[RMDB]
RNA sequence: GGGAACGACUCGAGUAGAGUCGAAAAUGUUUCGCCGCAGUGGCUGCUUUAUACAGGCAACAUAUAAUUGGCUUUUGAUAGAUGAAUUGCGUCACGCAUAUGCCAAGGCGGGACACAUCCGGUGAAAAAUAUCACUCCGUUUCGACGGAGUGAUAUUAAAAGAAACAACAACAACAAC
Reactivity to DMS in 0.01 (KOAc 150mM, MgCl2 10mM, bicine 150mM(pH8.5), 24C), signal-to-noise 4, nucleotides 027 to 126: u000g010u000u000u000c000g050c000c010g030c220a120g010u000g000g010c100u000g020c010u000u010u010a090u010a190c240a030g000g010c020a030a050c040a030u000a080u010a110a220u010u000g000g010c010u000u010u010u000g000a130u010a090g010a140u010g000a090a140u000u000g020c090g020u000c040a060c100g030c020a030u020a060u010g020c040c040a040a040g000g020c010g000g000g000a020c020a020c100a120u000c010c010g010g000u000g010a020a060a090
Reactivity to 2A3 in 0.01 (KOAc 150mM, MgCl2 10mM, bicine 150mM(pH8.5), 24C), signal-to-noise 4, nucleotides 027 to 126: u040g000u000u000u000c030g000c020c000g000c110a100g010u020g030g020c100u010g020c010u130u150u080a250u100a090c090a020g040g040c020a030a000c040a030u140a000u050a130a140u120u040g020g020c000u140u130u070u080g140a140u110a230g130a130u080g060a100a220u180u180g080c030g070u070c030a040c120g000c020a060u070a020u160g020c020c010a000a020g000g000c000g000g000g010a000c020a010c000a040u020c020c020g000g050u160g090a130a070a020